[RMDB]
RNA sequence: GGGAACGACUCGAGUAGAGUCGAAAAGUUUUCACAGCCCAACAGUCGGGCGUGUUUCCACACCAAGUGUGUCUCCGUUUCGCUCUUGGGCUUAUUAACCCAUUGCUCAGUGGUUAUGGCCAUUUGGAAUCGGCCUAUAUUUCGAUAUAGGCCGAUUAAAAGAAACAACAACAACAAC
Reactivity to DMS in 0.01 (KOAc 150mM, MgCl2 10mM, bicine 150mM(pH8.5), 24C), signal-to-noise 5, nucleotides 027 to 126: g000u000u000u030u000c100a110c160a090g030c010c000c010a020a140c150a040g020u020c070g030g000g030c010g000u040g000u000u010u000c090c060a090c130a150c070c100a100a090g020u000g000u010g000u020c040u010c010c020g000u000u010u050c120g000c020u000c090u000u000g010g000g000c010u020u020a040u020u040a080a110c000c000c000a110u020u000g000c060u020c110a070g020u020g000g000u020u020a060u020g000g000c000c020a060u020u010u000g020g020
Reactivity to 2A3 in 0.01 (KOAc 150mM, MgCl2 10mM, bicine 150mM(pH8.5), 24C), signal-to-noise 8, nucleotides 027 to 126: g020u030u040u070u120c060a060c020a060g000c010c010c010a070a060c090a080g300u300c110g000g000g000c030g010u050g020u000u060u020c030c030a030c000a020c020c060a140a140g020u020g010u000g010u060c010u020c030c020g030u030u070u110c020g000c000u020c020u060u070g010g010g000c000u110u110a100u080u150a100a030c000c000c000a030u040u120g010c030u030c060a020g030u030g120g030u100u140a140u300g060g000c010c010a030u050u020u060g030g020

An RNA of 177 nucleotides, treated with DMS and 2A3 and read out base by base. For 2A3 the reverse transcriptase was SuperScript II with manganese. The RNA was probed in 150 mM KOAc, 10 mM MgCl2 and 150 mM bicine (pH 8.5) at 24 C. In probing experiments dimethyl sulfate is read out at A N1 and C N3, which are open when not base-paired. For DMS the reverse transcriptase was MarathonRT. For 2A3, 5,992 sequencing reads were counted. The DMS profile rests on 8,994 reads.